About this RNA: Chemical mapping of a 177-nucleotide RNA with DMS and 2A3. For 2A3 the reverse transcriptase was SuperScript II with manganese. The DMS profile rests on 3,457 reads. The RNA was probed in 150 mM KOAc, 10 mM MgCl2 and 150 mM bicine (pH 8.5) at 24 C.
RNA sequence: GGGAACGACUCGAGUAGAGUCGAAAACUCAAUUUCGCCUUACACCGGUGUGGUGAAGAAUGCCAAUUCAACCUGGCUCAACGGUCAGCCAUUCGAUAAAGACUUAAGCGCGAGGUUGCAGCGGGAAUAUCCAUUAGGCAUUCGUGCCUAAUGGAUAAAAAGAAACAACAACAACAAC
Reactivity to DMS in 0.01 (KOAc 150mM, MgCl2 10mM, bicine 150mM(pH8.5), 24C), signal-to-noise 5, nucleotides 027 to 126: c010u010c020a130a110u000u000u000c030g020c030c010u000u000a090c040a070c130c080g000g030u000g010u000g010g020u010g000a050a070g000a110a090u010g000c020c040a090a300u010u000c110a050a060c120c040u010g000g010c000u000c070a060a160c260g000g000u000c040a080g010c120c080a090u000u020c140g000a080u000a060a120a120g000a020c030u000u010a100a190g020c090g000c020g000a030g000g000u000u000g010c120a060g030c300g000g000g030a100a140
Reactivity to 2A3 in 0.01 (KOAc 150mM, MgCl2 10mM, bicine 150mM(pH8.5), 24C), signal-to-noise 4, nucleotides 027 to 126: c000u000c010a020a040u040u040u060c020g000c010c010u090u100a090c070a070c080c080g210g000u110g040u090g040g000u030g010a020a020g080a070a040u170g060c010c010a010a000u020u040c000a030a000c000c000u010g090g000c000u000c010a020a070c050g020g010u020c010a010g050c070c030a110u160u100c030g080a080u130a110a140a020g020a020c010u040u100a050a020g010c020g010c030g100a000g020g000u010u020g020c020a000g010c020g010g030g020a030a050
About this RNA:
For DMS the reverse transcriptase was MarathonRT.